[RMDB]
RNA sequence: GGGAACGACUCGAGUAGAGUCGAAAAUCCAUUAAGUUCGCUUAAUGGAAAAUAAAAAGAGGAGCUAGCUACACCCUCUAUAACCUAAGAUCGAAAGAUCAAAAACUUAAAGGUUCGCCUUUAAGAAGUUACCUAAAUUGUUCGCAAUUUAGGUAACAAAAGAAACAACAACAACAAC
Reactivity to DMS in 0.01 (KOAc 150mM, MgCl2 10mM, bicine 150mM(pH8.5), 24C), signal-to-noise 2, nucleotides 027 to 126: u000c000c000a000u000u000a020a000g000u000u010c220g010c000u000u010a000a010u000g000g010a000a030a070a040u000a050a110a070a140a060g000a020g000g010a120g030c060u050a130g020c090u010a090c110a200c090c000c000u010c010u000a110u000a110a210c000c010u000a030a090g010a000u000c010g000a200a070a110g000a020u000c010a060a040a070a170a160c010u000u000a000a050a030g010g000u000u000c270g010c010c000u010u020u010a000a000g000a080a100
Reactivity to 2A3 in 0.01 (KOAc 150mM, MgCl2 10mM, bicine 150mM(pH8.5), 24C), signal-to-noise 2, nucleotides 027 to 126: u000c000c000a000u000u000a000a010g020u020u110c160g000c110u000u010a000a000u010g000g000a020a050a010a030u040a010a040a010a030a000g000a000g010g010a030g050c090u070a010g050c020u070a150c030a070c080c000c000u000c010u010a090u080a060a020c010c040u060a110a110g000a010u000c000g040a120a030a010g000a000u010c020a040a110a040a000a000c000u010u020a030a000a000g020g030u030u050c170g120c010c000u020u000u010a010a000g010a020a020

Notes: Chemical mapping of a 177-nucleotide RNA with DMS and 2A3. Reactivities are rounded to 0.1 and cut off at 0 and 3. For DMS the reverse transcriptase was MarathonRT. The reactions ran in a buffer of 150 mM KOAc, 10 mM MgCl2 and 150 mM bicine (pH 8.5), at 24 C. For 2A3, 3,911 sequencing reads were counted. The data come from the RNA Mapping Database (RMDB), library M2PK50. 2A3 adducts were read by reverse transcription with SuperScript II with manganese.